[RMDB]
RNA sequence: GGGAACGACUCGAGUAGAGUCGAAAAAUUGGAAGGAUUAGGUGUGACUUACCAGUUAACAGUUAAGGGUGAUGACGUUAGAGCAGCUCUUGUAAUCCCAGAAUCAGAGUUUAAAACACAGGGUGUGACCAUCUUAUACUUUCGAGUAUAAGAUGGUAAAAGAAACAACAACAACAAC
Reactivity to 2A3 in 0.01 (KOAc 150mM, MgCl2 10mM, bicine 150mM(pH8.5), 24C), signal-to-noise 7, nucleotides 027 to 126: a000u080u070g030g010a050a020g040g040a030u070u120a070g080g000u060g020u040g060a020c010u020u060a120c000c010a030g030u040u070a100a030c020a070g030u070u130a060a050g040g010g020u050g070a220u070g040a040c040g020u060u100a030g000a020g060c030a000g000c000u000c000u010u020g030u030a030a040u020c010c010c010a010g090a030a040u110c040a020g020a040g100u050u120u180a080a080a020a000c060a010c030a050g170g040g010u090g070u100g070
Reactivity to DMS in 0.01 (KOAc 150mM, MgCl2 10mM, bicine 150mM(pH8.5), 24C), signal-to-noise 9, nucleotides 027 to 126: a060u000u000g000g010a060a040g010g010a110u000u010a070g010g020u000g010u000g010a090c040u000u000a100c050c030a050g010u000u000a080a090c120a080g010u010u010a060a060g010g000g010u000g010a090u000g000a090c060g010u010u010a090g010a160g010c040a060g000c020u000c020u000u000g010u010a080a110u000c010c000c010a130g000a080a080u010c130a070g010a070g010u000u000u010a040a060a070a070c070a030c060a100g010g010g020u000g010u000g010

An RNA of 177 nucleotides, treated with 2A3 and DMS and read out base by base. The RNA was probed in 150 mM KOAc, 10 mM MgCl2 and 150 mM bicine (pH 8.5) at 24 C. DMS adducts were read by reverse transcription with MarathonRT. Source: RMDB library OK2TRN, as collected in RNAgym.